[RMDB]
RNA sequence: GGGAACGACUCGAGUAGAGUCGAAAAAAGAUAUGGAGCUCUGACAUGACGUUAGGUGGCGACGAAGGGAGCUCGGAAACGAGCUCCCAGAGCCACUGGGACGUCAACAGCAGAGCUCCUAAGUCAACUCUUAGAGUAGCUUCGGCUACUCUAAGAGAAAAGAAACAACAACAACAAC
Reactivity to DMS in 0.01 (KOAc 150mM, MgCl2 10mM, bicine 150mM(pH8.5), 24C), signal-to-noise 1, nucleotides 027 to 126: a120a090g000a070u000a300u040g050g020a010g000c000u000c000u000g020a090c080a300u010g010a010c010g030u000u000a300g000g000u000g000g000c000g000a070c080g000a150a100g020g010g030a000g010c000u020c010g020g000a060a070a170c000g020a010g000c000u000c000c000c000a000g000a040g000c010c000a010c040u000g010g010g020a000c000g020u000c000a000a070c210a170g000c000a010g010a000g000c020u000c000c020u030a010a050g020u000c010a160a280

Chemical mapping of a 177-nucleotide RNA with DMS. The DMS profile rests on 771 reads. The reactions ran in a buffer of 150 mM KOAc, 10 mM MgCl2 and 150 mM bicine (pH 8.5), at 24 C. DMS adducts were read by reverse transcription with MarathonRT. Values cover nucleotides 27 to 126.